Conditions: 150 mM KOAc, 10 mM MgCl2 and 150 mM bicine (pH 8.5), 24 C. This 177-nucleotide RNA was probed chemically with 2A3 and DMS. DMS adducts were read by reverse transcription with MarathonRT. For 2A3, 16,542 sequencing reads were counted.
RNA sequence: GGGAACGACUCGAGUAGAGUCGAAAAAACGCCACUAUUUGCUUCUGGCGAAGUCGGAAGAAAUCGAUGUGCAGCUGGAAAUCGUCUGGAAUCCUGUAGACUCCACGUCCAGCCAGCAACAAGCCGACUUCACAAUAACAUUCGUGUUAUUGUGAAGAAAAGAAACAACAACAACAAC
Reactivity to 2A3 in 0.01 (KOAc 150mM, MgCl2 10mM, bicine 150mM(pH8.5), 24C), signal-to-noise 8, nucleotides 027 to 126: a000a000c080g010c020c010a040c050u070a120u060u090u190g100c020u030u040c020u040g010g000c040g040a090a050g030u040c010g020g030a060a040g050a070a140a040u100c090g050a110u080g050u070g030c020a020g000c010u010g000g030a040a150a100u160c030g080u030c070u050g000g020a020a020u040c020c040u180g080u120a040g010a020c020u010c010c000a010c010g010u000c010c010a010g010c000c010a020g000c010a010a060c010a050a000g030c010c010g030a050
Reactivity to DMS in 0.01 (KOAc 150mM, MgCl2 10mM, bicine 150mM(pH8.5), 24C), signal-to-noise 9, nucleotides 027 to 126: a060a080c100g010c010c010a060c070u000a050u000u010u010g010c080u000u000c050u000g010g010c010g020a080a070g020u000c010g000g010a090a070g010a060a090a070u010c110g010a110u010g020u000g010c010a210g010c010u000g010g010a040a090a070u010c080g010u010c130u000g020g000a020a030u000c010c140u010g010u010a170g010a020c030u000c010c020a050c050g010u000c010c030a040g010c000c030a300g000c000a040a060c080a070a110g000c030c040g010a100
The DMS profile rests on 14,591 reads. Reactivities are rounded to 0.1 and cut off at 0 and 3. 2A3 adducts were read by reverse transcription with SuperScript II with manganese. Source: RMDB library OK2TST, as collected in RNAgym.